Notes
The record gives the reactivity of an RNA of 207 nucleotides to DMS and 2A3. The reactions ran in a buffer of 150 mM KOAc, 10 mM MgCl2 and 150 mM bicine (pH 8.5), at 24 C.
RNA sequence: GGGAACGACUCGAGUAGAGUCGAAAAUGAGCGAGUGACACUGGGUGCAAUAAUUCGAAGGGUCUGCACUUUACGUCAAUUUUGUAGCUACUUUGCUGCGAUCAUAUGGAAUAUGAUGGUGUUAAACAAUGACCCACCAGCCAACUGGCAGAAGAAGGAGUAUAUGAACAUUCGUGUUCAUAUACUCAAAAGAAACAACAACAACAAC
Reactivity to DMS in 0.01 (KOAc 150mM, MgCl2 10mM, bicine 150mM(pH8.5), 24C), signal-to-noise 4, nucleotides 027 to 156: u000g020a090g010c020g000a120g060u010g000a140c070a090c040u010g000g000g020u010g030c060a100a100u000a050a090u000u010c080g000a110a150g020g010g010u000c050u010g020c040a040c050u000u000u000a070c070g000u010c050a060a190u000u000u010u010g020u010a070g050c020u000a090c100u000u010u000g020c010u000g000c050g000a080u000c060a070u000a080u000g010g020a090a300u000a050u010g010a040u000g020g020u010g000u010u000a050a060a080c080a080a120u000g000a040c020c000c000a080c020c010a080g010c050c090a120a070c080u000g010g040c030a090g020a040a080g030a090a120g000
Reactivity to 2A3 in 0.01 (KOAc 150mM, MgCl2 10mM, bicine 150mM(pH8.5), 24C), signal-to-noise 9, nucleotides 027 to 156: u180g010a030g020c060g020a020g040u050g020a020c020a000c080u030g020g000g030u060g030c060a050a120u130a160a110u190u150c120g090a090a090g010g010g020u010c020u040g000c030a010c000u030u070u090a040c040g030u010c030a080a110u070u060u050u160g030u020a010g000c020u040a110c140u180u180u170g010c010u010g000c010g030a030u030c020a020u050a070u130g170g100a170a060u070a040u100g050a020u050g010g030u020g010u060u120a050a090a030c070a080a110u110g010a010c000c000c000a010c000c010a010g020c020c010a070a090c100u050g060g000c030a020g040a110a000g020a040a040g130

Description:
For 2A3, 11,287 sequencing reads were counted.